[RMDB]
RNA sequence: GGGAACGACUCGAGUAGAGUCGAAAACUGCAGGUCAACGGUACUUCUUCAGAUCAGCUAUUGCAGAAGAGAGGUGAUCCAAGCGCUCUGGGCCAGUGCGACUGUAUAUAGGAGCUUAUCAUUUCAACCAGAAGCUAACUCUCUCCGAAACAAUGAGAUAAUUACGUAUGUUCGCAUACGUAAUUAUAAAAGAAACAACAACAACAAC
Reactivity to DMS in 0.01 (KOAc 150mM, MgCl2 10mM, bicine 150mM(pH8.5), 24C), signal-to-noise 4, nucleotides 027 to 156: c050u000g040c040a100g030g030u000c020a090a130c060g020g020u000a040c040u000u000c040u000u000c060a090g010a080u000c060a100g020c030u000a070u000u000g020c010a100g020a090a080g020a060g010a040g020g010u010g020a110u010c100c070a070a120g010c030g000c080u000c030u010g000g030g010c070c080a050g030u010g030c030g010a060c020u000g010u000a140u000a160u000a190g020g010a090g020c020u000u000a100u000c020a040u010u000u000c020a030a090c020c000a080g020a050a080g020c010u000a080a110c060u000c010u010c010u000c010c000g000a260a110a080c040a030a070u010g000a120g020
Reactivity to 2A3 in 0.01 (KOAc 150mM, MgCl2 10mM, bicine 150mM(pH8.5), 24C), signal-to-noise 8, nucleotides 027 to 156: c030u050g010c030a030g030g020u050c030a060a030c080g020g020u060a060c040u040u040c000u050u030c050a030g010a110u030c030a010g040c030u100a050u120u130g010c030a030g020a160a000g020a020g000a010g040g050u070g030a040u050c070c060a090a020g010c020g030c060u010c010u020g020g010g020c050c040a050g040u050g070c010g040a060c030u030g070u120a080u030a040u110a220g030g020a010g010c000u080u110a100u170c050a130u040u180u110c050a070a050c000c010a020g010a090a000g030c010u020a050a060c000u000c000u000c000u000c050c020g070a040a050a030c050a040a070u110g010a050g010